[RMDB]
RNA sequence: GGGAACGACUCGAGUAGAGUCGAAAACUGAGACCGUGCUGCUCGAGCGCCCAGUCGGCGAGAUGGGGGUUGGCGCGGAGGAAGGAAGUCCAGAGAUCCACGGCCAGGGCGGUUUGCAGACGGUCCCGGUACUGACGGAACUGCUGCCCGACGGCCAGAGUGCAAUACAGUUCGCUGUAUUGCACUCAAAAGAAACAACAACAACAAC
Reactivity to 2A3 in 0.01 (KOAc 150mM, MgCl2 10mM, bicine 150mM(pH8.5), 24C), signal-to-noise 1, nucleotides 027 to 156: c040u050g010a000g000a120c020c020g060u100g120c040u010g000c000u020c080g110a060g020c030g050c000c010c010a030g230u140c080g030g060c070g040a060g040a150u090g080g000g000g000g080u100u140g010g000c050g020c050g020g010a030g020g030a000a090g060g030a130a020g110u020c020c010a000g010a000g000a120u040c050c030a070c150g010g010c030c090a080g030g010g030c030g000g040u130u160u190g030c020a020g030a060c010g050g000u000c010c010c000g000g030u160a200c070u090g100a030c020g000g000a000a020c000u030g020c050u050g030c010c000c000g070a090c060g030g010c020c000a000